[RMDB]
RNA sequence: GGGAACGACUCGAGUAGAGUCGAAAAGAUAUGGAUUACCCAAGACUUGGAUUUAAUUGCCGUUUGACGGACAUCGGAAACGAUGUCCCGAGGCAAUUUGUCAGUCUUGGUAAUCCUAAGUCAAACAUCGCUUACUGGUUCGCCAGUAAGCGAUGAAUACUAUAAUUUGCUUCGGCAAAUUAUAGUAAAAAGAAACAACAACAACAAC
Reactivity to DMS in 0.01 (KOAc 150mM, MgCl2 10mM, bicine 150mM(pH8.5), 24C), signal-to-noise 1, nucleotides 027 to 156: g010a100u000a200u000g000g010a020u000u000a020c080c030c070a040a030g000a020c000u000u000g040g010a060u010u000u000a020a010u000u000g000c000c010g000u010u000u010g020a140c240g010g010a030c000a010u000c020g010g010a260a150a300c000g010a010u000g000u000c000c000c000g000a070g020g000c010a010a000u000u000u010g010u000c020a070g030u000c000u010u000g010g030u000a000a010u000c000c020u000a020a080g020u000c070a130a130a240c030a020u000c000g010c000u000u000a000c020u000g020g000u000u000c300g030c000c000a000g020u000a000a010g000c020g000a000u000g000a050a130
Reactivity to 2A3 in 0.01 (KOAc 150mM, MgCl2 10mM, bicine 150mM(pH8.5), 24C), signal-to-noise 5, nucleotides 027 to 156: g020a010u070a020u130g000g000a010u020u020a020c050c070c060a000a000g010a010c050u190u300g130g010a080u300u300u230a010a000u010u010g010c010c010g110u130u170u270g040a040c020g010g000a000c000a000u000c010g030g040a100a030a080c010g000a000u000g000u000c000c000c000g000a010g000g000c000a000a000u000u000u010g010u010c010a010g000u000c000u000u010g000g000u000a000a000u000c000c000u010a070a010g030u020c030a040a040a070c000a010u000c010g000c000u000u000a000c000u010g030g020u060u080c190g050c080c010a000g000u000a000a000g000c000g000a000u000g000a000a000